[RMDB]
RNA sequence: GGGAACGACUCGAGUAGAGUCGAAAAUGGUGAACGGAGGGCACUAGGUACCUGGCGAUCUCACGUCUCCUGCGCUCAUCCAUCAGCGCACCUCGUCGGUAGAGCAACUGAAGGAACGGAAUUAGCAACCAUCAGUGGGGUUCGCCCCACUGAUGGUAAAAGAAACAACAACAACAAC
Reactivity to 2A3 in 0.01 (KOAc 150mM, MgCl2 10mM, bicine 150mM(pH8.5), 24C), signal-to-noise 1, nucleotides 027 to 126: u110g040g000u100g010a100a030c070g060g010a000g060g010g010c050a060c060u070a030g060g010u100a100c030c020u050g050g040c040g030a100u050c050u000c080a060c040g080u030c030u010c020c020u040g010c010g000c010u020c020a080u070c080c010a070u030c030a010g020c050g020c070a070c000c030u020c030g130u060c000g010g110u030a030g020a000g100c020a050a000c060u070g040a020a050g070g000a040a000c020g020g050a000a050u090u010a110g090c050a050
Reactivity to DMS in 0.01 (KOAc 150mM, MgCl2 10mM, bicine 150mM(pH8.5), 24C), signal-to-noise 2, nucleotides 027 to 126: u020g020g010u000g020a050a050c080g020g010a070g000g010g010c070a030c080u010a040g000g010u010a060c110c020u000g010g000c050g000a070u000c070u000c140a110c040g010u010c020u000c030c070u000g010c050g010c010u000c090a110u000c070c030a100u000c110a040g020c050g010c030a150c080c020u000c110g000u000c060g060g040u000a050g000a070g020c110a070a100c060u010g030a070a080g000g000a070a110c090g010g000a070a070u020u000a120g000c130a100